[RMDB]
RNA sequence: GGGAACGACUCGAGUAGAGUCGAAAACACGUGCCGGGCGAUGGCCUCGUGGAACUCCUGCUUCGAGGCGAAGUAGUGGAACAGCAGCCCGCGCGAGAUGCCCGCUUGCUUGGCGAUGUCGUCGACAAGGUGGAUUUAGGUUCGCCUAAAUCCACCUAAAAGAAACAACAACAACAAC
Reactivity to 2A3 in 0.01 (KOAc 150mM, MgCl2 10mM, bicine 150mM(pH8.5), 24C), signal-to-noise 1, nucleotides 027 to 126: c040a010c000g050u010g090c110c010g000g050g000c050g080a080u170g070g000c010c010u020c000g030u030g030g070a070a100c040u050c060c000u060g030c010u000u020c000g030a030g040g010c050g050a080a020g030u200a010g020u150g050g050a140a090c030a010g110c020a010g000c000c000c000g000c000g000c020g000a040g000a020u050g020c010c020c000g070c020u000u100g000c000u010u090g040g000c030g140a210u210g120u290c030g010u020c020g060a030c000a050
Reactivity to DMS in 0.01 (KOAc 150mM, MgCl2 10mM, bicine 150mM(pH8.5), 24C), signal-to-noise 3, nucleotides 027 to 126: c080a270c050g030u000g010c210c000g010g010g020c010g000a130u010g000g010c000c000u010c040g050u040g000g000a080a080c080u000c100c030u000g010c010u000u000c010g000a060g000g010c030g000a060a080g000u010a070g020u000g000g020a090a110c080a110g020c050a300g000c000c010c030g010c010g010c020g000a040g000a200u000g010c010c000c020g010c090u000u010g000c080u010u010g000g030c030g010a160u000g000u000c050g010u000c030g000a130c140a090